About this RNA: An RNA of 177 nucleotides, treated with DMS and 2A3 and read out base by base. For 2A3, 869 sequencing reads were counted. The reactions ran in a buffer of 150 mM KOAc, 10 mM MgCl2 and 150 mM bicine (pH 8.5), at 24 C. It was measured as part of the RMDB library OK1LIB.
RNA sequence: GGGAACGACUCGAGUAGAGUCGAAAAUUCUGGUAUUUAACAUAUGCUCCAAUGGGUAAGAGAACAGGGCCAUCAUAUUGUUAAAGUAUCAGGCAAUGUGAAAAUUUUAAGUGCUCUGUACACAGAAUGAGGCUAAUCAGUUCGCUGAUUAGCCUCAAAAAGAAACAACAACAACAAC
Reactivity to DMS in 0.01 (KOAc 150mM, MgCl2 10mM, bicine 150mM(pH8.5), 24C), signal-to-noise 1, nucleotides 027 to 126: u020u000c010u000g000g000u000a040u000u000u010a160a110c020a040u020a110u000g000c000u000c000c050a110a140u000g000g010g040u000a070a080g000a120g000a120a020c010a000g010g000g010c000c040a110u010c000a000u000a000u000u000g000u000u000a120a110a060g010u040a030u010c120a160g000g000c020a020a000u010g010u030g000a040a040a080a270u020u000u090u010a150a080g020u010g000c000u000c000u010g000u000a000c220a130c120a020g020a090a020
Reactivity to 2A3 in 0.01 (KOAc 150mM, MgCl2 10mM, bicine 150mM(pH8.5), 24C), signal-to-noise 1, nucleotides 027 to 126: u020u000c000u000g000g100u160a100u070u080u010a100a040c080a070u090a080u180g050c000u060c030c000a170a120u070g000g050g000u000a000a130g000a000g000a070a060c000a000g000g000g060c010c010a000u000c000a000u000a000u040u030g000u000u220a030a030a030g010u060a110u130c060a000g000g120c000a020a020u090g070u000g040a000a090a300a270u200u190u120u120a140a000g000u020g050c000u000c000u000g030u030a040c250a000c000a000g000a000a000